[RMDB]
RNA sequence: GGGAACGACUCGAGUAGAGUCGAAAAUCACGCCAUCGCAGUUUCACGUUUUUCUGGUCUUUGGACUUCAAUGAAGCUAGUCAGUGAAAUUGUAGAAACUUCCGCUUCAGUUCAUGUCGACUUAGAAGCCAUCGAGUAAUUUCGAUUACUCGAUGGCAAAAGAAACAACAACAACAAC
Reactivity to DMS in 0.01 (KOAc 150mM, MgCl2 10mM, bicine 150mM(pH8.5), 24C), signal-to-noise 1, nucleotides 027 to 126: u000c070a100c090g010c030c050a100u010c050g010c080a030g000u000u010u010c020a050c010g000u000u000u000u000u000c040u040g020g020u000c020u000u030u010g040g000a080c050u010u000c120a110a130u000g010a030a050g000c030u000a030g010u000c050a080g010u000g000a020a020a050u000u000g060u000a030g020a050a060a040c050u000u010c120c080g020c010u000u000c000a050g010u000u000c030a030u000g010u000c100g000a070c040u000u000a130g030a110a080
Reactivity to 2A3 in 0.01 (KOAc 150mM, MgCl2 10mM, bicine 150mM(pH8.5), 24C), signal-to-noise 1, nucleotides 027 to 126: u040c010a010c000g000c000c010a030u110c070g030c080a030g000u000u050u000c040a020c000g000u010u040u000u100u000c070u050g060g080u030c030u060u070u110g090g050a220c000u090u030c100a130a140u300g040a040a000g050c010u000a020g090u080c050a010g010u010g080a000a040a040u080u210g040u080a060g060a000a020a020c000u100u030c050c000g000c020u000u000c020a020g020u060u030c020a010u140g100u170c070g030a040c000u040u050a040g020a070a010

The data come from the RNA Mapping Database (RMDB), library OK2TST. An RNA of 177 nucleotides, treated with DMS and 2A3 and read out base by base. The DMS profile rests on 1,003 reads. DMS adducts were read by reverse transcription with MarathonRT.